[RMDB]
RNA sequence: GGGAACGACUCGAGUAGAGUCGAAAAUGGAUGAUGAGGCCGACUUUGCGCAUGGCUGAUUCGCUGAGUGGUCGCGGUGGUUGGCUAGCUGGCACGCCUUUCAUUGUGGAGAGAGUGGGGAUCCAUGCGUUGAUGACUGAGCGUUGGAUGUGUGCGCAGGAUCACGUAAGUUCGCUUACGUGAUCCUAAAAGAAACAACAACAACAAC
Reactivity to 2A3 in 0.01 (KOAc 150mM, MgCl2 10mM, bicine 150mM(pH8.5), 24C), signal-to-noise 1, nucleotides 027 to 156: u140g080g040a060u010g010a020u050g020a000g030g000c010c010g000a030c050u110u150u240g000c110g010c010a000u110g030g030c000u040g030a030u100u110c000g000c020u030g020a060g030u080g030g070u060c010g000c000g020g040u000g020g020u020u100g000g000c010u000a010g030c020u080g080g000c050a010c050g000c020c000u000u050u130c030a160u080u040g030u110g040g010a020g000a010g040a040g080u100g000g000g010g000a000u000c020c000a010u050g030c000g020u080u150g030a080u080g030a050c040u020g030a000g040c060g000u060u040g050g050a100u080g030u020g000u020g000c060g040c030